Source: RMDB library OK3TST, as collected in RNAgym. An RNA of 207 nucleotides, treated with 2A3 and read out base by base. 2A3 adducts were read by reverse transcription with SuperScript II with manganese.
RNA sequence: GGGAACGACUCGAGUAGAGUCGAAAAUACGUACCUAUAGACAAGGAGGUUAAGAUAGAUGGGUUUUAUAUGCGCAUGACUCUCAAGGUGCUGACCUUGAGUGACGAUCUGGGAGUGUACCGCAACGACAGGAUGCACCGUGCAGUGAGCGCCAGCAGCGGCCUGGAAAAUUCGUUUUCCAGGCCGCAAAAGAAACAACAACAACAAC
Reactivity to 2A3 in 0.01 (KOAc 150mM, MgCl2 10mM, bicine 150mM(pH8.5), 24C), signal-to-noise 1, nucleotides 027 to 156: u060a010c020g000u010a070c000c010u080a100u120a050g040a010c060a040a060g000g000a010g040g030u090u100a100a040g000a130u130a040g120a100u070g020g090g000u050u110u090u170a150u050a000u040g010c070g000c010a000u120g050a050c000u010c000u000c090a030a000g050g000u110g040c150u120g090a200c000c010u030u000g000a000g000u050g040a020c090g060a040u050c050u070g000g060g000a090g040u020g030u010a070c000c000g000c030a090a050c010g060a050c010a030g000g050a030u080g000c020a010c000c050g030u000g000c010a000g000u000g100a070g040c070g000c070c010a010g080c010a070